[RMDB]
RNA sequence: GGGAACGACUCGAGUAGAGUCGAAAAGGGGUCAGGACGAUAAGAUGGUCCCAAGCUAUGAAGUACACUGAAGCCUCCACGGUGUAUGGAGCUUGUCACCAUCUUUUGACGUCCUGACGGAGGCACCCAAACAUGACAUGUUUCGACAUGUCAUGAAUGUGAUGGGAUCGUUCGCGAUCCCAUCACAAAAAGAAACAACAACAACAAC
Reactivity to 2A3 in 0.01 (KOAc 150mM, MgCl2 10mM, bicine 150mM(pH8.5), 24C), signal-to-noise 1, nucleotides 027 to 156: g100g000g110g020u000c000a000g040g010a000c020g040a120u130a300a010g000a000u020g000g020u010c070c120c000a020a000g000c000u090a210u300g000a000a000g000u000a010c020a000c000u060g050a090a000g000c000c000u000c040c010a000c000g040g000u000g000u000a000u020g000g000a000g000c000u000u000g000u020c000a000c010c010a000u000c020u020u060u080u090g250a090c010g000u000c000c000u010g000a000c000g020g010a010g020g020c010a100c030c010c010a010a100a000c000a000u000g010a000c010a000u010g020u040u070u080c090g140a020c020a000u000g000u000c000a000u010g050a020a110